The record gives the reactivity of an RNA of 207 nucleotides to DMS and 2A3. Conditions: 150 mM KOAc, 10 mM MgCl2 and 150 mM bicine (pH 8.5), 24 C. For DMS, 4,306 sequencing reads were counted. High 2A3 reactivity points to a flexible backbone, as in loops and unpaired stretches. The 2A3 profile rests on 1,391 reads. For 2A3 the reverse transcriptase was SuperScript II with manganese.
RNA sequence: GGGAACGACUCGAGUAGAGUCGAAAACGGCGCAAGUCAAAAAGUGCUAUCCGCAAUUGGUUAAAAAGUAGUCUAAAUUUACGUAAGAUUUAGUAAGGUGCAUCUUACGUGAUUUUCUUUAUAUAUUUCAUUGAGUUAAGUUAAAUCGGUAAGAUGGCAUAUUGCUUGCUUUCGAGCAAGCAAUAUGAAAAGAAACAACAACAACAAC
Reactivity to DMS in 0.01 (KOAc 150mM, MgCl2 10mM, bicine 150mM(pH8.5), 24C), signal-to-noise 2, nucleotides 027 to 156: c080g000g030c090g060c060a070a100g020u010c060a070a080a130a140a160g000u000g010c000u000a080u000c040c010g040c050a090a090u000u000g000g000u000u000a070a060a080a090a120g050u000a060g010u000c020u000a020a040a040u000u000u010a120c180g000u000a130a050g000a050u010u000u000a090g010u000a120a100g040g000u020g000c070a050u000c000u000u000a020c000g020u010g010a010u000u020u000u000c010u010u000u000a080u000a150u010a070u050u000u010c020a160u000u000g010a150g010u000u000a050a040g010u000u000a010a030a030u000c030g010g010u000a020a060g020a040u010g040g000
Reactivity to 2A3 in 0.01 (KOAc 150mM, MgCl2 10mM, bicine 150mM(pH8.5), 24C), signal-to-noise 3, nucleotides 027 to 156: c050g020g030c030g020c070a080a050g120u200c070a060a160a010a070a000g000u040g030c020u040a090u050c030c010g040c060a050a080u110u130g050g060u190u200a070a070a040a080a080g100u120a050g010u010c030u060a080a020a100u100u150u100a060c050g050u060a100a050g000a050u090u060u110a030g030u040a100a090g040g030u060g070c000a010u010c000u000u000a000c000g030u020g010a000u000u000u020u020c000u000u060u060a230u060a100u020a150u250u190u140c040a060u130u180g040a030g080u070u060a010a030g010u010u070a030a070a050u020c000g000g030u020a030a000g020a020u000g000g030